[RMDB]
RNA sequence: GGGAACGACUCGAGUAGAGUCGAAAAGGGAUUUAUCUUAAUUCUUGAAGUGGUGCUAGUUUUGUUGGUCCAAGAGUGAGAUUUGGACCAUGCGCUGGGGAGUCACAUCUAGCAGUUGCUUGAGCAAAGUUAGGAGAUUUUUCGAAAUCUCCUAACUAAAAGAAACAACAACAACAAC
Reactivity to DMS in 0.01 (KOAc 150mM, MgCl2 10mM, bicine 150mM(pH8.5), 24C), signal-to-noise 5, nucleotides 027 to 126: g000g000g010a100u000u010u010a070u010c060u000u020a090a120u010u000c020u000u000g010a070a050g030u010g020g010u000g010c020u010a040g020u010u010u010u000g030u010u000g010g020u000c000c000a000a030g010a130g010u010g010a180g010a160u000u000u000g000g000a010c010c000a020u000g020c080g020c100u000g010g010g010g020a100g010u000c080a050c090a050u000c030u000a030g010c030a050g010u010u000g000c030u010u000g000a100g010c230a070a070
Reactivity to 2A3 in 0.01 (KOAc 150mM, MgCl2 10mM, bicine 150mM(pH8.5), 24C), signal-to-noise 2, nucleotides 027 to 126: g060g010g000a050u140u190u080a150u060c040u040u130a120a090u190u010c020u020u060g060a040a020g020u020g030g010u000g000c020u020a030g010u050u000u100u220g080u050u040g020g000u000c010c000a020a010g100a030g150u250g060a180g040a140u000u000u030g000g000a000c000c000a000u040g060c090g000c040u060g000g000g080g020a030g050u050c010a020c010a090u040c020u010a010g010c020a030g070u230u050g010c010u030u040g020a050g030c040a030a070

The record gives the reactivity of an RNA of 177 nucleotides to DMS and 2A3.
The DMS profile rests on 6,734 reads.
As a SHAPE reagent, 2A3 marks flexible, mostly unpaired nucleotides at the ribose 2'-OH.
For DMS the reverse transcriptase was MarathonRT.
The reactions ran in a buffer of 150 mM KOAc, 10 mM MgCl2 and 150 mM bicine (pH 8.5), at 24 C.
For 2A3 the reverse transcriptase was SuperScript II with manganese.
In probing experiments dimethyl sulfate is read out at A N1 and C N3, which are open when not base-paired.
Reactivities are given for positions 27 through 126.